Structure probing data (DMS and 2A3) for a 177-nucleotide construct. For 2A3 the reverse transcriptase was SuperScript II with manganese. Reactivities are given for positions 27 through 126. The reactions ran in a buffer of 150 mM KOAc, 10 mM MgCl2 and 150 mM bicine (pH 8.5), at 24 C.
[RMDB]
RNA sequence: GGGAACGACUCGAGUAGAGUCGAAAAGAUGACAAGAAAAGGCCGAAUUGCAGUGUCUCCAUCAGCAGUUUGCUCUCCAUGGGCACACGAUGACAAAAUAUCCUGAAGCGAACCACUAGUCUGACCUUACAUAAGGGAUGUUCGCAUCCCUUAUGUAAAAAGAAACAACAACAACAAC
Reactivity to DMS in 0.01 (KOAc 150mM, MgCl2 10mM, bicine 150mM(pH8.5), 24C), signal-to-noise 3, nucleotides 027 to 126: g020a130u000g010a080c070a080a070g020a080a050a140a080g010g010c040c030g000a060a080u010u010g020c060a110g020u010g010u010c010u000c060c020a040u000c050a020g010c080a100g000u000u000u000g010c030u000c050u000c140c160a070u010g010g010g000c060a020c020a060c030g000a100u020g000a080c100a050a030a040a050u020a080u000c010c020u000g000a110a080g010c040g010a050a050c060c050a030c040u000a050g000u000c030u000g000a090c110c050u010
Reactivity to 2A3 in 0.01 (KOAc 150mM, MgCl2 10mM, bicine 150mM(pH8.5), 24C), signal-to-noise 3, nucleotides 027 to 126: g060a070u130g010a000c040a060a070g080a030a120a010a010g020g010c020c030g030a050a120u050u080g000c020a010g060u010g030u090c010u020c070c010a070u050c020a010g070c010a000g050u100u120u050g010c020u020c000u050c050c050a100u140g030g000g000c010a010c010a000c040g070a030u110g010a020c050a050a130a000a010u090a040u050c000c030u050g030a060a000g000c030g030a020a020c000c000a040c030u040a020g020u010c000u030g100a090c000c000u030